[RMDB]
RNA sequence: GGGAACGACUCGAGUAGAGUCGAAAACAGUUGGUUCCGCCGGAGGCGGCCUCCACAGGGCCUGCACUGCCGGCCAUUGCAUUGGGAGCUGCCAGCAGUGCUGCGGCGCCGUACAUUGCUGCCGCGAACCGAGUACUCGGUUCGCCGAGUACUCGGUAAAAGAAACAACAACAACAAC
Reactivity to DMS in 0.01 (KOAc 150mM, MgCl2 10mM, bicine 150mM(pH8.5), 24C), signal-to-noise 4, nucleotides 027 to 126: c070a110g010u010u000g010g000u000u000c030c050g010c050c020g000g020a160g020g030c050g010g010c030c020u000c040c140a090c200a160g000g010g010c010c020u000g030c020a050c040u000g010c010c020g020g010c040c110a020u000u000g020c060a130u010u010g010g010g000a140g000c060u000g010c040c010a040g010c010a040g000u000g000c070u000g000c020g000g000c050g010c060c140g000u010a090c120a060u010u000g010c030u000g020c020c020g010c050g010a120
Reactivity to 2A3 in 0.01 (KOAc 150mM, MgCl2 10mM, bicine 150mM(pH8.5), 24C), signal-to-noise 3, nucleotides 027 to 126: c010a020g040u080u070g110g020u150u010c020c040g000c020c020g200g030a070g040g050c010g030g020c010c020u040c010c010a060c040a040g020g000g040c000c040u040g000c070a100c080u110g020c010c000g000g000c010c010a070u070u110g020c020a050u050u170g070g010g070a080g020c040u030g000c030c010a020g010c020a010g020u030g050c040u100g010c010g030g030c020g020c040c040g030u070a040c010a110u030u220g000c050u100g010c030c020g070c030g020a030